[RMDB]
This 177-nucleotide RNA was probed chemically with DMS and 2A3.
DMS adducts were read by reverse transcription with MarathonRT.
For DMS, 67,938 sequencing reads were counted.
Reactivities are given for positions 27 through 126.
RNA sequence: GGGAACGACUCGAGUAGAGUCGAAAAUGGAAGCGCCAACGGCCGAGCGCACUCUCCAGGGGCCUCCGUGGCCGGGGCCGCGACGCUACCACCCCUCCAGACGCCGGAGGAAGGAGGAACGAGGCCACGGUGAUCAGAUCUUCGGAUCUGAUUACUGAAAAGAAACAACAACAACAAC
Reactivity to DMS in 0.01 (KOAc 150mM, MgCl2 10mM, bicine 150mM(pH8.5), 24C), signal-to-noise 9, nucleotides 027 to 126: u020g010g010a080a080g000c030g000c010c020a080a140c080g010g000c010c010g000a110g010c040g010c040a080c070u010c070u000c030c040a090g010g000g000g010c050c010u000c020c070g010u010g000g010c020c010g000g000g010g010c010c010g000c090g020a080c100g000c060u010a110c030c030a130c060c030c000c010u010c010c010a110g010a190c110g010c100c060g000g000a030g000g010a110a090g000g000a080g000g000a140a100c090g000a140g000g000c000c010a080
Reactivity to 2A3 in 0.01 (KOAc 150mM, MgCl2 10mM, bicine 150mM(pH8.5), 24C), signal-to-noise 8, nucleotides 027 to 126: u080g030g020a050a010g010c010g000c010c010a070a030c030g020g000c010c010g010a010g010c020g000c010a040c030u070c000u000c010c010a010g020g000g040g010c000c000u010c010c050g030u030g010g000c000c000g010g000g010g000c000c000g020c020g030a020c030g010c020u040a050c000c000a020c000c010c000c000u000c000c010a030g020a070c040g050c050c030g010g000a010g010g010a010a070g010g010a020g000g010a030a020c020g020a030g000g000c000c000a010